The record gives the reactivity of an RNA of 177 nucleotides to 2A3 and DMS. Reactivities are rounded to 0.1 and cut off at 0 and 3. The reactions ran in a buffer of 150 mM KOAc, 10 mM MgCl2 and 150 mM bicine (pH 8.5), at 24 C. As a SHAPE reagent, 2A3 marks flexible, mostly unpaired nucleotides at the ribose 2'-OH.
RNA sequence: GGGAACGACUCGAGUAGAGUCGAAAAAGCCUCACUACGGUGAGGCAAAAUGAUGACAAAAUAUCCCAAAAUGCCUAUUUGAAGCUUGCUUCAAAAAUGAAGGUUAAUCCAAUUUGCCACUGAUAAAACUUCACAUAUGAUUCGUCAUAUGUGAAGUAAAAGAAACAACAACAACAAC
Reactivity to 2A3 in 0.01 (KOAc 150mM, MgCl2 10mM, bicine 150mM(pH8.5), 24C), signal-to-noise 9, nucleotides 027 to 126: a010g010c000c000u010c010a000c010u040a020c280g100g000u000g010a000g000g000c000a000a000a000a000u030g020a010u050g020a010c070a010a120a010a050u110a080u080c000c000c000a030a050a020a030u160g020c010c010u040a070u060u040u020g010a010a010g010c050u120u130g020c000u010u080c000a020a020a000a020a050u230g080a060a030g020g010u060u090a020a040u050c060c040a050a110u050u050u120g050c030c030a100c070u080g060a090u140a110a110a030
Reactivity to DMS in 0.01 (KOAc 150mM, MgCl2 10mM, bicine 150mM(pH8.5), 24C), signal-to-noise 6, nucleotides 027 to 126: a080g010c000c000u000c000a000c010u000a130c190g060g020u000g000a010g010g010c020a000a010a040a040u020g010a100u000g010a050c120a070a060a060a060u020a080u000c000c000c010a070a050a130a070u020g010c000c000u000a160u000u000u000g000a010a010g010c020u030u000g030c000u000u000c010a000a020a010a110a100u040g010a090a020g010g030u000u010a060a080u030c100c100a060a090u010u000u010g000c020c000a060c140u010g010a090u000a040a070a070

Values cover nucleotides 27 to 126.